RNA sequence: GGGAACGACUCGAGUAGAGUCGAAAAGAUAUGGAUUACCUUGCUUUUGACGGAUAGCAGAUACGAAACUAUCGGAAACGAUAGAAUUUCGUAUCUGCUAUCCGAUAAGCAGGGUAAUCCUAAGUCAGUACUAACGUAUGUUCGCAUACGUUAGUACAAAAGAAACAACAACAACAAC
Reactivity to DMS in 0.01 (KOAc 150mM, MgCl2 10mM, bicine 150mM(pH8.5), 24C), signal-to-noise 5, nucleotides 027 to 126: g010a070u010a300u000g010g000a020u000u000a000c000c000u000u000g000c000u000u000u010u010g020a300c180g010g010a010u000a010g010c000a010g000a010u000a000c000g000a010a020a040c000u000a000u000c000g010g010a130a110a220c010g010a010u000a010g000a100a120u000u000u000c000g000u000a000u000c000u000g000c000u000a000u000c010c000g010a010u000a000a010g010c000a000g010g010g010u000a000a000u000c000c000u000a000a070g000u000c050a160
Chemical mapping of a 177-nucleotide RNA with DMS. DMS adducts were read by reverse transcription with MarathonRT. For DMS, 10,053 sequencing reads were counted. Values cover nucleotides 27 to 126. Source: RMDB library TTRINS, as collected in RNAgym.